This 207-nucleotide RNA was probed chemically with DMS and 2A3. The reactions ran in a buffer of 150 mM KOAc, 10 mM MgCl2 and 150 mM bicine (pH 8.5), at 24 C. For 2A3, 1,676 sequencing reads were counted. 2A3 adducts were read by reverse transcription with SuperScript II with manganese. For DMS, 1,393 sequencing reads were counted.
[RMDB]
RNA sequence: GGGAACGACUCGAGUAGAGUCGAAAAGAAGCGACUAAAACUUACACAACUCGCCCAAAGCACCCUGCCCGUCGGGUCGCUGAGGGUUAACUUAAUAGACACGGCUAAGCAUGUAGUACCGACAGCGGAGUACUGGCGGACGGGGGUUCAAAUCCCCACUCCACCUAAGAUUCGUCUUAGGUGGAGUAAAAGAAACAACAACAACAAC
Reactivity to DMS in 0.01 (KOAc 150mM, MgCl2 10mM, bicine 150mM(pH8.5), 24C), signal-to-noise 1, nucleotides 027 to 156: g000a090a050g010c000g050a160c090u000a070a090a140a110c120u000u000a090c090a210c080a040a080c050u000c020g030c000c010c010a020a300a150g000c080a080c020c030c000u000g040c030c040c110g000u010c060g040g030g040u000c110g000c040u050g020a300g000g030g030u000u010a000a040c050u000u030a080a150u010a050g010a070c060a030c030g000g010c040u000a030a110g000c020a120u030g020u020a040g000u000a070c020c000g020a020c000a040g020c000g000g000a230g070u000a050c030u000g010g030c010g000g020a120c140g000g020g000g020g020u040u000c150a030a120a130u000c000c000c000c050
Reactivity to 2A3 in 0.01 (KOAc 150mM, MgCl2 10mM, bicine 150mM(pH8.5), 24C), signal-to-noise 3, nucleotides 027 to 156: g080a040a010g090c010g080a020c070u140a020a050a140a150c050u210u240a030c070a010c030a120a170c090u070c070g010c000c010c000a010a000a000g010c010a010c000c000c010u020g020c010c000c000g030u030c010g010g000g000u000c010g000c010u000g000a020g000g000g000u000u040a020a000c000u020u090a000a020u040a040g030a000c010a010c100g000g050c040u060a040a000g050c060a050u120g060u150a050g020u040a140c000c030g070a040c020a030g040c030g060g060a070g040u050a110c000u010g000g020c000g000g000a010c030g020g000g000g010g000u000u030c010a010a010a090u050c000c000c000c000